[RMDB]
Chemical mapping of a 177-nucleotide RNA with 2A3 and DMS. The reactions ran in a buffer of 150 mM KOAc, 10 mM MgCl2 and 150 mM bicine (pH 8.5), at 24 C.

RNA sequence: GGGAACGACUCGAGUAGAGUCGAAAAGGUUGAUGCGUUUACGUUGAUGCUGCUUAUCGGCAAAGAGAUCAUACUGGGGUUAUUGAUUGGGUUUGUGGCCACCAUUCCUUUCUGGGCCUUAGAAUCCCGCUAUUAGAGAAUUCGUUCUCUAAUAGCGAAAAGAAACAACAACAACAAC
Reactivity to 2A3 in 0.01 (KOAc 150mM, MgCl2 10mM, bicine 150mM(pH8.5), 24C), signal-to-noise 5, nucleotides 027 to 126: g050g000u060u070g020a070u060g020c050g030u050u080u070a060c040g000u030u100g020a040u050g020c040u010g000c030u090u110a110u160c020g010g000c020a030a090a020g070a020g010a030u050c030a020u060a140c040u050g030g000g000g040u050u090a110u130u140g070a070u040u090g040g020g020u020u060u080g060u080g040g020c010c010a020c030c000a040u060u070c000c000u030u100u040c040u070g000g010g020c000c000u010u010a050g010a060a050u030c020c010
Reactivity to DMS in 0.01 (KOAc 150mM, MgCl2 10mM, bicine 150mM(pH8.5), 24C), signal-to-noise 9, nucleotides 027 to 126: g010g020u000u000g000a070u000g010c050g010u000u010u000a070c110g020u000u010g010a140u000g010c030u000g010c080u010u000a080u010c090g010g010c060a060a090a100g000a090g010a050u000c050a040u000a090c090u000g000g010g010g010u000u010a070u000u000g000a080u010u010g010g000g010u000u000u010g010u000g000g000c020c030a080c090c040a100u000u000c040c020u000u000u000c070u000g010g010g000c050c030u000u010a080g000a100a150u000c030c030
The 2A3 profile rests on 7,956 reads.
For DMS the reverse transcriptase was MarathonRT.
Reactivities are given for positions 27 through 126.